An RNA of 177 nucleotides, treated with DMS and 2A3 and read out base by base. It was measured as part of the RMDB library OK2TRN. Values are in units of 0.01, from 0 to 300, in steps of 10. DMS adducts were read by reverse transcription with MarathonRT. The RNA was probed in 150 mM KOAc, 10 mM MgCl2 and 150 mM bicine (pH 8.5) at 24 C.
RNA sequence: GGGAACGACUCGAGUAGAGUCGAAAAGAAAGGCAGCGAGUGCAGCCCACGCAGGGGCAUGCUUUUGCAUGCCCAGUCGAGCCCACGACUCAGGGCAGCUGCGUCACUGAGGGCAGCUGCCGAAAGACAUAUGCCACUGAUUCGUCAGUGGCAUAUGAAAAGAAACAACAACAACAAC
Reactivity to DMS in 0.01 (KOAc 150mM, MgCl2 10mM, bicine 150mM(pH8.5), 24C), signal-to-noise 6, nucleotides 027 to 126: g010a110a130a140g010g010c010a030g000c020g000a090g020u000g010c070a080g010c030c030c110a100c110g000c080a090g020g020g000g010c000a000u000g000c000u000u000u000u010g020c000a000u000g000c000c000c010a010g000u000c020g000a130g010c000c000c010a300c050g010a030c020u010c100a150g010g000g020c060a130g010c020u000g000c030g000u010c190a140c110u000g010a090g000g000g000c000a130g000c000u000g010c000c000g010a010a040a090g010a250
Reactivity to 2A3 in 0.01 (KOAc 150mM, MgCl2 10mM, bicine 150mM(pH8.5), 24C), signal-to-noise 3, nucleotides 027 to 126: g080a010a090a020g030g010c020a000g020c040g050a050g130u130g040c050a020g000c010c030c010a060c030g020c020a060g000g010g010g020c010a000u020g010c010u210u200u230u300g000c000a010u010g000c000c000c000a000g000u000c000g000a010g000c010c010c010a040c020g040a020c010u050c080a040g110g170g010c020a020g010c000u010g000c000g070u070c020a080c110u110g050a200g020g020g010c000a010g000c020u010g000c000c000g000a000a000a000g050a000